Structure probing data (2A3 and DMS) for a 177-nucleotide construct.
For DMS the reverse transcriptase was MarathonRT.
It was measured as part of the RMDB libraries RFM100 and RFMREP.
Reactivities are given for positions 27 through 126.
The RNA was probed in 150 mM KOAc, 10 mM MgCl2 and 150 mM bicine (pH 8.5) at 24 C.
RNA sequence: GGGAACGACUCGAGUAGAGUCGAAAACAGCUGCCGCGGGAACCUGCCGCGUCGGCAAUAAAGGUAAGCGUUGCGUUCGAAUAUGGGACAAGAAUUAAGCCAACAUGAACUUUAUGUAGAACAGUUAUAUGUUCCUUUUAUUCGUAAAAGGAACAUAAAAAGAAACAACAACAACAAC
Reactivity to 2A3 in 0.01 (KOAc 150mM, MgCl2 10mM, bicine 150mM(pH8.5), 24C), signal-to-noise 6, nucleotides 027 to 126: c040a010g000c000u020g000c010c000g010c020g000g030g030a120a140c010c060u060g040c020c000g000c000g000u000c000g010g000c000a000a000u110a040a030a000g100g010u070a030a020g010c020g030u000u010g000c010g030u010u050c060g050a130a030u120a100u230g050g020g050a040c050a040a020g040a080a070u090u070a040a010g020c010c010a010a000c010a060u050g020a040a030c020u060u060u070a080u150g120u100a040g040a170a020c030a090g030u120u070a090
Reactivity to DMS in 0.01 (KOAc 150mM, MgCl2 10mM, bicine 150mM(pH8.5), 24C), signal-to-noise 8, nucleotides 027 to 126: c080a110g010c010u000g000c060c010g010c000g010g010g010a090a100c140c090u010g010c000c000g010c000g000u010c000g010g020c020a100a040u020a040a080a040g010g010u010a070a130g010c110g020u000u000g010c080g010u000u000c020g000a090a110u020a100u020g000g000g000a090c090a060a090g010a060a060u010u010a070a070g010c070c020a030a040c030a040u000g000a060a120c030u010u010u010a030u020g010u010a080g000a070a060c120a050g010u010u020a140